The record gives the reactivity of an RNA of 177 nucleotides to DMS. DMS adducts were read by reverse transcription with MarathonRT. Reactivities are given for positions 27 through 126. The data come from the RNA Mapping Database (RMDB), library M2PK90.
[RMDB]
RNA sequence: GGGAACGACUCGAGUAGAGUCGAAAAGUCAUUAACGCGUGUGCACUCUCUAACACGAUUUACCCAGUUAUUUUCGACUUUACUCGAGUCGUUAUAGCGUGAUAUGAGAGAGUAAUCCGCGACCAAAAUCAGCAGGUAAAUUCGUUUACCUGCUGAUAAAAGAAACAACAACAACAAC
Reactivity to DMS in 0.01 (KOAc 150mM, MgCl2 10mM, bicine 150mM(pH8.5), 24C), signal-to-noise 1, nucleotides 027 to 126: g000u000c170a070u010u010a010a030c050g030c000g000u000g010u010g000c120a040c020u020c000u000c020u010a190a010c000a010c000g000a160u010u000u000a110c120c090c100a140g000u010u000a080u000u000u000u000c000g010a010c000u000u000u000a010c010u010c000g000a000g000u000c000g000u020u000a020u000a100g000c000g040u010g000a010u000a090u000g010a030g010a050g000a030g010u000a130a170u000c000c010g000c020g040a230c060c030a040a060a050
Conditions: 150 mM KOAc, 10 mM MgCl2 and 150 mM bicine (pH 8.5), 24 C. For DMS, 1,121 sequencing reads were counted.